[RMDB]
RNA sequence: GGGAACGACUCGAGUAGAGUCGAAAAGAUAUGGACCGUGCAGAGCGCGUCCCAUGGUCGGAAACGACCAUGAACCGAACUACGCUCUGAAACGGUCCUAAGUCAAACUUGACCUUCGGGUCAAGAAUCUCACAGUUACGUUCGCGUAACUGUGAGAAAAAGAAACAACAACAACAAC
Reactivity to 2A3 in 0.01 (KOAc 150mM, MgCl2 10mM, bicine 150mM(pH8.5), 24C), signal-to-noise 1, nucleotides 027 to 126: g030a020u030a020u110g000g000a030c030c010g000u010g020c000a000g010a010g030c040g010c030g080u050c010c010c000a030u000g010g020u010c000g030g010a090a060a090c000g000a000c000c000a000u020g000a020a000c070c040g030a060a030c050u130a120c170g010c000u000c000u010g010a300a160a020c020g000g000u000c000c000u000a010a000g000u040c030a060a020a050c000u010u000g010a010c000c000u030u000c300g140g000g000u010c000a000a010g010a030a080
Reactivity to DMS in 0.01 (KOAc 150mM, MgCl2 10mM, bicine 150mM(pH8.5), 24C), signal-to-noise 2, nucleotides 027 to 126: g000a060u000a300u000g000g000a010c000c000g040u000g050c030a010g000a000g000c000g000c300g000u000c000c080c020a000u000g000g000u060c000g010g000a080a120a130c020g000a010c020c010a000u000g000a060a050c170c130g000a070a120c130u000a150c010g010c000u000c000u000g000a040a090a010c030g000g000u000c000c000u000a020a030g010u000c020a080a110a140c010u000u000g000a000c000c010u000u000c180g030g010g000u000c000a000a000g010a110a100